[RMDB]
RNA sequence: GGGAACGACUCGAGUAGAGUCGAAAAGAUAUGGAGAUGUGUAGCGCAUGUAGGUCGGAAACGACCUACCACUGAACUACGCUGACACAUCUCCUAAGUCAAAGUCUAUCACUUCGGUGAUAGACAACACAGGAUCUGUGUUCGCACAGAUCCUGUGAAAAGAAACAACAACAACAAC
Reactivity to DMS in 0.01 (KOAc 150mM, MgCl2 10mM, bicine 150mM(pH8.5), 24C), signal-to-noise 1, nucleotides 027 to 126: g010a050u010a300u010g000g030a010g010a000u010g000u010g020u000a020g000c020g010c000a040u020g020u000a000g000g010u010c010g000g000a050a070a220c010g010a000c010c000u000a010c020c100a110c090u000g020a120a120c140u010a100c020g020c010u000g000a020c020a000c000a000u000c000u000c000c000u010a010a030g000u010c130a060a140a130g000u010c000u000a000u000c000a010c000u010u000c230g030g000u000g040a020u010a010g000a000c000a060a080
Reactivity to 2A3 in 0.01 (KOAc 150mM, MgCl2 10mM, bicine 150mM(pH8.5), 24C), signal-to-noise 2, nucleotides 027 to 126: g010a000u050a020u100g010g000a020g000a000u010g010u010g000u020a000g000c050g030c130a020u280g010u000a010g000g000u000c020g010g040a040a040a050c020g020a000c000c000u000a000c000c000a030c020u060g030a060a020c050u210a100c250g020c010u070g170a010c020a000c000a000u000c000u010c000c000u000a050a010g010u010c060a090a060a000g000u050c000u000a010u010c000a000c010u050u130c300g070g000u010g000a010u000a010g000a000c000a070a000